An RNA of 177 nucleotides, treated with DMS and 2A3 and read out base by base. The RNA was probed in 150 mM KOAc, 10 mM MgCl2 and 150 mM bicine (pH 8.5) at 24 C. The DMS profile rests on 1,189 reads.

RNA sequence: GGGAACGACUCGAGUAGAGUCGAAAACUCAGGGCAACCCCAGAUCCUUAUUCUACUGAAGGAGGCUGGCAUGGAGUGUGCAUCCUCACAGAUCCUAGGGGGUUUAUGUCUGCUGAGCCAUGAUGGGGCUUUUCAGUGAGUUCGCUCACUGAAAAGCAAAAGAAACAACAACAACAAC
Reactivity to DMS in 0.01 (KOAc 150mM, MgCl2 10mM, bicine 150mM(pH8.5), 24C), signal-to-noise 1, nucleotides 027 to 126: c020u000c010a070g050g000g000c040a060a100c020c010c010c020a140g000a070u000c010c020u020u020a080u000u000c130u020a130c180u040g010a050a030g000g000a030g000g010c080u000g000g000c130a050u000g000g010a070g020u010g020u010g030c020a070u000c030c020u000c020a090c130a130g000a050u010c020c120u030a110g000g000g000g000g000u010u000u000a050u010g000u000c020u000g000c100u000g030a050g010c050c010a080u010g000a110u030g010g010g000
Reactivity to 2A3 in 0.01 (KOAc 150mM, MgCl2 10mM, bicine 150mM(pH8.5), 24C), signal-to-noise 1, nucleotides 027 to 126: c020u050c030a020g000g030g040c020a060a090c070c000c020c000a000g010a020u000c020c000u110u120a120u180u140c050u060a270c120u130g050a040a010g010g050a030g030g010c050u120g050g070c030a060u080g140g160a100g080u110g000u050g020c020a060u050c000c000u000c000a100c030a020g040a080u040c070c020u200a120g000g060g000g000g000u000u190u110a040u000g040u000c030u060g050c000u000g010a010g110c010c000a000u080g020a090u100g020g060g050